[RMDB]
RNA sequence: GGGAACGACUCGAGUAGAGUCGAAAAAAGAUCUGCUUAAAGUUCGGGUGACGGGGGUUCGCGAAGACGGGCUCGCGGCGGACCAGAUCCCCGGAGCUCCAGGACACGGGGGAGAUGGUGUGGCGUCUCCAUUACGUCGGUUCGCCGACGUAAUGGAAAAAGAAACAACAACAACAAC
Reactivity to DMS in 0.01 (KOAc 150mM, MgCl2 10mM, bicine 150mM(pH8.5), 24C), signal-to-noise 2, nucleotides 027 to 126: a060a060g010a040u000c040u010g000c030u020u020a020a070a050g030u000u000c050g010g000g060u010g030a160c120g040g040g000g000g000u000u000c090g000c090g030a050a110g000a090c160g010g000g000c060u000c050g010c080g000g000c090g000g000a030c040c090a100g000a300u000c000c010c010c000g030g020a080g000c040u000c040c050a060g030g030a070c040a070c160g000g000g010g010g000a060g000a130u000g000g040u000g020u010g000g010c020g000u000c060
Reactivity to 2A3 in 0.01 (KOAc 150mM, MgCl2 10mM, bicine 150mM(pH8.5), 24C), signal-to-noise 3, nucleotides 027 to 126: a000a000g070a020u060c050u070g090c030u080u210a110a040a040g040u130u010c000g020g010g040u080g040a040c040g010g000g030g010g010u080u130c010g010c050g090a070a030g070a080c060g000g030g000c030u010c000g180c000g020g000c090g000g030a020c020c010a040g000a180u020c000c010c010c010g020g010a010g030c010u010c070c030a060g010g070a070c030a020c070g000g020g010g000g010a060g020a040u050g010g070u080g010u040g090g020c030g060u000c050